[RMDB]
RNA sequence: GGGAACGACUCGAGUAGAGUCGAAAACAACAAAAUCAGCAUGAUACUCAUCAUGUAGAUCUCGUUUCGCUCGAUGUUCUGGAUUGUCAGUGAGAUCUAAAGUUCGGUAAUAGGUUGAAGGUGCAAUCGGUAAAAUUCUACAAAUCGCUUCAACACCAUAUCGAUCUUUAUUGUUAUGGAUAAAAUCCACCAUUAUUUGUGUGGGCGGUCGAGCUCCGCCUGGGCGAAAAAAGCGGCUGCUUUACGUAAAAACAAAACAAAAGAAAACUCUUGACUUCGGUCAAGAGAAAAGAAACAACAACAACAAC
Reactivity to 2A3 in 0.01 (KOAc 150mM, MgCl2 10mM, bicine 150mM(pH8.5), 24C), signal-to-noise 2, nucleotides 027 to 266: c050a030a000c060a060a150a030a020u170c010a020g010c000a000u050g030a030u160a230c100u140c180a000u070c000a020u050g030u040a030g000a020u000c080u000c020g120u020u110u020c030g040c020u010c010g020a030u000g020u120u130c050u030g040g050a060u080u090g020u100c010a040g060u000g120a010g000a020u020c000u000a000a000a050g000u010u010c010g000g000u050a060a080u080a190g070g000u010u000g010a030a000g030g140u090g080c090a130a060u150c040g000g020u030a050a070a200a220u210u140c100u110a060c040a060a270a080u100c050g010c070u020u020c000a030a030c040a080c060c070a000u030a000u050c000g000a000u010c000u000u030u020a020u080u040g040u040u110a080u070g030g000a080u100a120a140a000a020u010c010c010a020c070c000a020u030u050a060u180u300u130g060u000g010u030g010g030g000c000g000g000u040c070g070a050g000c040u000c000c000g010c020c010u040g000g000g000c000g000a200a060a000a000a020a000g060c000g110g000c000u080g050c000u020u050u160a030c030g000u050a090a050a000a080a100c070a000a010a020a020c160a060a030a120a240g300a070a300a020a050
Description
An RNA of 307 nucleotides, treated with 2A3 and read out base by base. Conditions: 150 mM KOAc, 10 mM MgCl2 and 150 mM bicine (pH 8.5), 24 C. For 2A3 the reverse transcriptase was SuperScript II with manganese. Reactivities are given for positions 27 through 266. Source: RMDB library POS240, as collected in RNAgym. For 2A3, 1,454 sequencing reads were counted.